[RMDB]
RNA sequence: GGGAACGACUCGAGUAGAGUCGAAAAGCCCUCCUGGCGUACUCCUCGAUCCUCUCGGCCUCGUCUCGAAGCCAGGCCUCGCCCCUCUCGAGCGCCAGGCUCCGGAGGAACCCAGCCUGGUUGAGCACUGUUACAGCAGGUUCGCCUGCUGUAACAGAAAAGAAACAACAACAACAAC
Reactivity to DMS in 0.01 (KOAc 150mM, MgCl2 10mM, bicine 150mM(pH8.5), 24C), signal-to-noise 2, nucleotides 027 to 126: g020c020c000c020u000c040c010u010g040g020c050g010u000a120c070u000c040c020u000c070g000a100u000c040c020u000c010u010c070g000g000c090c020u000c080g000u030c010u000c020g020a150a080g030c030c000a000g000g010c000c020u000c160g000c180c040c000c010u000c010u000c300g000a040g000c040g000c070c130a070g000g000c020u010c040c160g000g020a050g000g010a060a090c020c030c040a130g000c000c010u020g000g010u000u020g040a090g010c110a190